[RMDB]
RNA sequence: GGGAACGACUCGAGUAGAGUCGAAAAUGCUGUCGUUGACAGCGCCCAACGCUUCACAACCUGAAAGAAGCGCCUGUUAUCAGGACGGUUGAUCCAUUUACCGGUGCAGACCUCUGCAAACACCGGGGUACAACUAUCUGUUCGCAGAUAGUUGUACAAAAGAAACAACAACAACAAC
Reactivity to 2A3 in 0.01 (KOAc 150mM, MgCl2 10mM, bicine 150mM(pH8.5), 24C), signal-to-noise 9, nucleotides 027 to 126: u170g000c000u000g010u030c060g300u070u300g010a000c000a000g000c000g030c000c000c000a040a010c010g010c000u010u010c020a030c010a140a010c010c000u010g000a010a010a000g010a000a000g000c010g040c000c000u150g020u210u160a180u300c010a000g000g000a000c020g010g000u000u000g010a060u040c030c010a060u070u090u200a080c000c010g000g010u020g000c010a020g070a180c020c120u200c040u120g010c000a040a090a010c060a010c000c000g000g000g020
Reactivity to DMS in 0.01 (KOAc 150mM, MgCl2 10mM, bicine 150mM(pH8.5), 24C), signal-to-noise 4, nucleotides 027 to 126: u030g000c020u000g000u000c010g010u020u040g000a010c000a010g010c000g000c000c000c020a110a110c010g000c000u000u000c000a120c040a030a020c020c020u020g000a040a210a250g000a010a000g010c000g010c010c020u000g020u000u010a230u020c010a000g000g020a110c100g000g040u000u000g020a220u040c160c200a130u010u030u020a140c000c000g000g010u000g010c030a050g000a170c240c300u070c030u010g010c070a120a110a150c080a080c000c000g020g000g010